[RMDB]
RNA sequence: GGGAACGACUCGAGUAGAGUCGAAAACGUGGAAUCGCAUUCUGUUUUUUAAUUUGUCGAUUUAUUAUGAAAGAACUUAUCAUGACGAAGAAAAGGAUGAAUGUGUAUUAUCCUUCACUAUUUAAAAAUUCAUCCUUUAUCACAAUCUUAGUGAUUAGCCAUCACUACUAUUCGUAGUAGUGAUGGCAAAAGAAACAACAACAACAAC
Reactivity to 2A3 in 0.01 (KOAc 150mM, MgCl2 10mM, bicine 150mM(pH8.5), 24C), signal-to-noise 3, nucleotides 027 to 156: c060g020u070g020g050a020a020u150c010g020c040a040u100u030c050u040g220u090u040u010u050u070u170a140a140u080u050u060g060u100c010g010a000u040u080u050a080u150u100a100u150g050a040a080a100g040a100a030c020u050u050a020u020c010a030u070g020a060c040g010a010a010g020a010a030a000a000g010g000a000u000g000a010a000u030g020u000g020u070a060u070u040a040u170c050c000u070u120c010a010c030u050a200u050u270u300a050a160a040a090a060u020u030c010a000u000c000c000u020u010u020a110u030c020a020c020a030a100u070c010u070u150a010g020u010g010a030u060u110a010
Reactivity to DMS in 0.01 (KOAc 150mM, MgCl2 10mM, bicine 150mM(pH8.5), 24C), signal-to-noise 1, nucleotides 027 to 156: c050g020u010g050g000a060a040u000c100g030c020a300u000u000c010u000g030u000u000u020u000u000u000a020a080u000u000u000g030u020c020g000a080u020u000u000a070u010u040a210u000g000a090a050a150g020a210a080c030u000u030a050u010c070a090u000g020a040c050g010a070a060g000a110a040a020a040g000g020a030u000g000a030a020u030g020u000g000u000a050u000u000a070u010c130c060u040u000c030a070c100u000a140u000u010u010a010a110a110a080a060u000u000c000a000u000c000c000u020u000u010a050u030c010a030c100a100a040u020c030u020u020a220g010u000g020a050u000u000a210